[RMDB]
Source: RMDB library M2RFPK, as collected in RNAgym. Structure probing data (2A3) for a 207-nucleotide construct.

RNA sequence: GGGAACGACUCGAGUAGAGUCGAAAAGACCCUUUAUGGAACUGUCAUUCAACCCCAAAAAUCUAGUGCAAAUAUUGUCUUAAUUACUUAGGCGAAAAGAAAUAAGUAUUAAAGCGGGACAAGGCAUAACAGCAGCUACGCUUCGGCGUAGCUGCAACCUAGCUUAUAGUUUCGACUAUAAGCUAGGAAAAGAAACAACAACAACAAC
Reactivity to 2A3 in 0.01 (KOAc 150mM, MgCl2 10mM, bicine 150mM(pH8.5), 24C), signal-to-noise 1, nucleotides 027 to 156: g040a000c030c010c000u030u140u030a200u160g000g000a140a000c020u020g010u020c010a010u060u050c050a060a160c010c020c000c020a100a030a060a060a090u080c080u150a090g040u000g040c010a000a140a140u160a160u120u020g000u000c000u010u110a090a080u120u000a050c000u000u010a020g110g000c040g180a210a040a040a040g040a070a030a000u070a040a000g000u000a010u070u140a180a020a040g080c130g060g040g000a000c020a030a010g030g000c010a000u080a100a100c030a080g030c000a000g000c010u000a000c030g040c000u020u080c240g090g000c000g000u000a010g000c000u000g000c000a000a000